This 177-nucleotide RNA was probed chemically with 2A3 and DMS. The reactions ran in a buffer of 150 mM KOAc, 10 mM MgCl2 and 150 mM bicine (pH 8.5), at 24 C. Source: RMDB library OK1LIB, as collected in RNAgym. Values cover nucleotides 27 to 126. For 2A3, 1,930 sequencing reads were counted.

RNA sequence: GGGAACGACUCGAGUAGAGUCGAAAAGGUGUAGCCGCGGUGCCAACGCUGGUGACGAGGAAGAACCGACGUGCGUGGCUGUAUGUGGAGGGUGUUGUCCUGCUGUUGGUGGGCGCGUUGGUGCUCGCGGGUAGUCAAGUUUCGACUUGACUACCCGAAAAGAAACAACAACAACAAC
Reactivity to 2A3 in 0.01 (KOAc 150mM, MgCl2 10mM, bicine 150mM(pH8.5), 24C), signal-to-noise 3, nucleotides 027 to 126: g060g000u050g000u120a010g020c010c030g020c040g030g040u060g040c010c020a030a000c060g010c050u050g030g060u080g030a020c070g010a010g060g060a130a060g050a050a050c030c010g030a040c020g070u090g020c010g030u060g070g000c030u070g010u090a130u170g060u070g010g030a060g010g000g000u080g020u000u080g060u030c010c020u000g030c030u030g020u090u060g040g050u030g040g060g030c030g000c000g010u000u060g060g000u030g000c050u040c070g010
Reactivity to DMS in 0.01 (KOAc 150mM, MgCl2 10mM, bicine 150mM(pH8.5), 24C), signal-to-noise 2, nucleotides 027 to 126: g030g010u010g020u000a040g070c050c050g040c020g020g010u000g000c010c020a020a070c040g020c000u020g000g000u010g010a080c090g020a100g000g010a070a090g010a100a090c030c020g040a050c060g020u020g010c040g030u020g000g000c080u000g000u010a000u010g010u000g000g000a040g000g020g020u010g000u010u000g000u010c030c040u030g010c080u020g000u010u000g000g010u010g000g020g010c150g030c000g000u000u000g000g010u010g000c010u030c070g020